[RMDB]
RNA sequence: GGGAACGACUCGAGUAGAGUCGAAAAUUCAUGAACCAUGUCAGGUCCGGAAGGAAGCAGCAUUAAGUGAAACCUCUCAUGUGCCGCAGGGUUGCCUGGGCCGAGCUAACUGUUUAAGUAACGCUUGGGGUAGCGAAUCGACAGAAGGUGCACGGUAUCCUUCCUUUUACUUCGGUAAAAGGAAGGAAAAAGAAACAACAACAACAAC
Reactivity to 2A3 in 0.01 (KOAc 150mM, MgCl2 10mM, bicine 150mM(pH8.5), 24C), signal-to-noise 1, nucleotides 027 to 156: u060u030c010a020u050g030a070a060c040c010a010u020g080u050c030a010g080g020u010c000c030g040g030a030a060g070g000a060a020g020c020a010g010c000a000u090u110a080a060g010u020g070a030a050a060c010c000u000c020u010c040a100u110g070u120g050c010c000g090c060a050g060g030g060u170u090g070c010c010u050g010g030g000c010c020g000a010g010c010u050a010a030c020u030g150u190u160u070a070a020g020u040a070a030c020g000c020u040u020g000g050g000g000u010a000g030c040g080a080a060u040c040g020a010c000a020g050a060a010g040g000u050g000c050a020c090g010g020u050a070
Reactivity to DMS in 0.01 (KOAc 150mM, MgCl2 10mM, bicine 150mM(pH8.5), 24C), signal-to-noise 2, nucleotides 027 to 156: u010u000c030a140u000g010a060a080c040c040a150u000g010u000c030a170g060g020u000c010c020g000g000a110a100g010g000a080a090g040c040a060g030c050a080u000u000a070a140g020u010g000a110a070a120c060c020u000c060u000c040a090u000g010u010g050c050c030g050c040a090g020g020g000u000u010g000c010c030u020g000g040g010c020c030g000a100g010c030u000a120a100c040u000g010u000u000u000a030a100g030u000a070a120c160g010c010u000u000g000g010g010g010u000a060g000c030g020a120a100u020c030g000a040c020a060g010a040a130g010g020u000g000c050a090c020g010g030u020a190
Chemical mapping of a 207-nucleotide RNA with 2A3 and DMS. 2A3 adducts were read by reverse transcription with SuperScript II with manganese. DMS adducts were read by reverse transcription with MarathonRT. Conditions: 150 mM KOAc, 10 mM MgCl2 and 150 mM bicine (pH 8.5), 24 C.